[RMDB]
RNA sequence: GGGAACGACUCGAGUAGAGUCGAAAACAAGGUGUGAAGAGCCUACUGAGCUACAUGAGAGUCCUCCGGCCCCUGAAUGCGGCUAAUCUCAACCACGGAGCAGGUAGUCACAAACCAGUGAUUUGCCUCAACUGUCCACCUUCGGGUGGACAGUUGAAAAAGAAACAACAACAACAAC
Reactivity to DMS in 0.01 (KOAc 150mM, MgCl2 10mM, bicine 150mM(pH8.5), 24C), signal-to-noise 1, nucleotides 027 to 126: c110a080a040g000g020u020g000u000g000a090a150g010a250g000c000c070u020a010c080u000g000a190g000c100u020a040c030a090u080g030a090g000a040g030u000c040c000u000c050c030g030g020c030c000c000c000u000g000a020a080u000g020c040g050g000c100u040a120a030u000c100u050c000a000a230c050c080a060c010g000g000a030g000c080a050g000g000u000a080g000u000c020a020c000a110a160a180c090c000a080g000u000g000a000u000u030u000g020c040c050
Reactivity to 2A3 in 0.01 (KOAc 150mM, MgCl2 10mM, bicine 150mM(pH8.5), 24C), signal-to-noise 2, nucleotides 027 to 126: c070a050a000g060g060u100g020u120g070a040a070g000a030g070c000c030u050a100c030u060g090a070g000c010u030a030c040a070u140g070a040g000a000g100u030c020c000u000c000c030g060g000c000c000c000c030u100g050a090a000u120g030c010g030g000c010u020a070a110u050c040u000c010a010a080c000c010a070c080g030g000a030g040c010a000g000g000u020a000g010u020c000a000c000a000a100a090c030c010a060g020u000g020a030u100u030u130g000c010c020